[RMDB]
Overview
Conditions: 150 mM KOAc, 10 mM MgCl2 and 150 mM bicine (pH 8.5), 24 C. This 177-nucleotide RNA was probed chemically with 2A3 and DMS. The 2A3 profile rests on 13,089 reads.
RNA sequence: GGGAACGACUCGAGUAGAGUCGAAAACGUCGACUUUGACCACCACGCCGUCGAUUUCGUGGUCGACCUCGUGGCGAUGCUCGCCCCAGUAGUCGAUGCGCGCCUGUACCUCGGCCAGGUCGGCGACACUGCCUAUACGGUUCGCCGUAUAGGCAGUAAAAGAAACAACAACAACAAC
Reactivity to 2A3 in 0.01 (KOAc 150mM, MgCl2 10mM, bicine 150mM(pH8.5), 24C), signal-to-noise 9, nucleotides 027 to 126: c020g030u020c020g010a050c040u110u070u200g080a100c010c010a030c020c000a030c040g010c010c000g030u030c010g020a060u060u070u120c170g080u170g040g000u010c010g010a020c000c020u040c030g090u120g050g020c040g040a060u100g050c060u040c040g040c010c020c010c010a050g080u130a000g010u070c010g020a030u110g120c030g000c000g020c070c040u080g060u210a140c020c020u050c050g010g000c010c010a010g000g010u010c000g010g000c010g010a010c020
Reactivity to DMS in 0.01 (KOAc 150mM, MgCl2 10mM, bicine 150mM(pH8.5), 24C), signal-to-noise 3, nucleotides 027 to 126: c070g000u020c010g020a050c030u020u040u040g000a050c080c060a150c100c050a150c100g010c100c070g030u020c000g000a050u000u000u010c100g020u000g020g010u000c010g000a010c030c090u010c040g020u010g000g010c060g000a070u040g030c100u020c020g020c060c040c000c040a160g010u030a090g010u010c040g000a010u000g010c110g010c010g030c060c060u010g010u030a100c100c080u010c070g000g010c020c050a050g000g010u010c000g000g000c000g010a050c080
It was measured as part of the RMDB library OK1LIB. DMS adducts were read by reverse transcription with MarathonRT.